[RMDB]
RNA sequence: GGGAACGACUCGAGUAGAGUCGAAAAAAUCUGCUUAAGAAGUUGAUUGGCGGUGAUGUCACUCCAGUUGACCAAUACAUGUGUGGCGUUGAUGGAAAACCCAUUAGUGCCUACGCAUUUUUAAUGGACCGAGAUACCUUCGGGUAUCUCAAAAGAAACAACAACAACAAC
Reactivity to 2A3 in 0.01 (KOAc 150mM, MgCl2 10mM, bicine 150mM(pH8.5), 24C), signal-to-noise 9, nucleotides 027 to 129: a000a040u070c040u050g030c020u080u060a120a030g120a070a010g070u050u030g010a050u000u020g030g010c090g030g040u040g070a230u300g220u300c000a010c020u000c000c000a010g000u020u020g070a130c020c010a080a080u070a120c050a030u040g010u000g010u010g000g000c000g010u010u010g000a010u020g000g000a060a080a050a070c000c000c000a000u000u000a010g010u000g000c000c000u020a020c000g000c000a020u060u040u020u040u120a160a180u140g090g030a020c050c060
Reactivity to DMS in 0.01 (KOAc 150mM, MgCl2 10mM, bicine 150mM(pH8.5), 24C), signal-to-noise 7, nucleotides 027 to 129: a080a040u050c050u010g030c080u010u020a090a070g060a090a050g000u000u000g010a070u020u010g050g000c190g040g000u000g000a170u080g040u040c040a030c040u030c030c030a040g030u000u000g030a060c030c030a110a150u080a040c230a030u040g030u000g020u020g000g000c040g000u000u000g020a030u030g010g030a070a080a060a150c260c010c000a000u020u000a030g030u050g030c030c000u050a020c050g050c010a020u010u010u000u030u010a050a100u000g000g000a150c160c070